Chemical mapping of a 177-nucleotide RNA with 2A3 and DMS. It was measured as part of the RMDB libraries RFM100 and RFMREP. For 2A3 the reverse transcriptase was SuperScript II with manganese.

RNA sequence: GGGAACGACUCGAGUAGAGUCGAAAACUCUUCAAUCAUGGAGACAUCGUGAUGAGGAUACUUUCAAAGCGCCAGCUCAAGGAGCUGGUCCUCUACUCGCCGCAACACGUCGCGCGGCUGGAAAAGGUUAGAAAAGUUAGUUCGCUAACUUUUCUAAAAAAGAAACAACAACAACAAC
Reactivity to 2A3 in 0.01 (KOAc 150mM, MgCl2 10mM, bicine 150mM(pH8.5), 24C), signal-to-noise 9, nucleotides 027 to 126: c020u010c000u010u010c040a130a280u010c010a020u030g130g030a140g100a210c060a140u140c050g010u010g010a010u010g000a000g010g000a020u050a160c050u030u070u050c060a110a100a040g060c060g000c040c000a010g000c000u010c080a180a190g190g000a000g030c000u000g000g000u000c010c000u000c000u010a010c010u010c020g010c010c010g020c020a060a040c090a040c140g160u130c010g030c020g010c010g050g000c010u020g010g000a050a060a010a000g070g010
Reactivity to DMS in 0.01 (KOAc 150mM, MgCl2 10mM, bicine 150mM(pH8.5), 24C), signal-to-noise 9, nucleotides 027 to 126: c150u000c000u000u010c020a060a070u000c010a010u000g010g010a170g010a180c300a090u020c020g030u000g000a010u000g000a040g010g000a030u010a070c220u010u000u010c050a090a130a090g010c200g010c000c000a010g000c010u000c010a140a180g010g000a020g010c000u000g000g010u000c040c000u000c000u000a120c010u000c160g000c070c020g010c040a070a170c120a090c150g010u010c090g010c200g000c020g000g000c020u000g000g000a040a070a140a060g010g010